Chemical mapping of a 177-nucleotide RNA with DMS and 2A3. 2A3 adducts were read by reverse transcription with SuperScript II with manganese. Reactivities are given for positions 27 through 126. The DMS profile rests on 1,015 reads. The RNA was probed in 150 mM KOAc, 10 mM MgCl2 and 150 mM bicine (pH 8.5) at 24 C. The data come from the RNA Mapping Database (RMDB), library TTRDEL.
RNA sequence: GGGAACGACUCGAGUAGAGUCGAAAAGAUAUGGAACCGAUAAGAUUGAUUCCAACAGCUCGGAAACGAGACAUGGAACAAUGAUCUUUUGACGGUUCCUAAGUCAAAAUCACCGUUCGCGGUGAAAUCGUUGAGUUUAGUUCGCUAAACUCAACGAAAAAGAAACAACAACAACAAC
Reactivity to DMS in 0.01 (KOAc 150mM, MgCl2 10mM, bicine 150mM(pH8.5), 24C), signal-to-noise 2, nucleotides 027 to 126: g000a050u000a300u000g000g020a020a030c010c040g000a220u000a010a010g020a030u000u000g010a140u020u000c000c020a060a070c300a150g010c000u000c000g020g020a100a090a140c000g000a000g020a050c130a170u000g000g010a020a010c100a130a080u000g010a000u010c000u000u000u000u010g000a140c090g020g000u010u000c000c010u000a030a150g000u000c030a030a040a050a090u010c010a000c020c000g020u020u000c190g010c000g010g000u010g020a000a030a090
Reactivity to 2A3 in 0.01 (KOAc 150mM, MgCl2 10mM, bicine 150mM(pH8.5), 24C), signal-to-noise 1, nucleotides 027 to 126: g030a010u080a000u130g020g020a000a000c000c060g000a050u030a100a030g000a000u040u120g110a110u030u050c000c010a020a010c060a210g070c020u000c000g010g000a070a050a070c020g020a000g000a040c050a090u080g000g020a060a000c020a070a060u150g000a020u000c010u020u190u080u180g300a160c030g000g020u000u000c000c000u000a090a020g030u020c000a010a020a010a240u020c010a000c040c000g000u040u050c260g010c000g090g010u000g040a100a030a010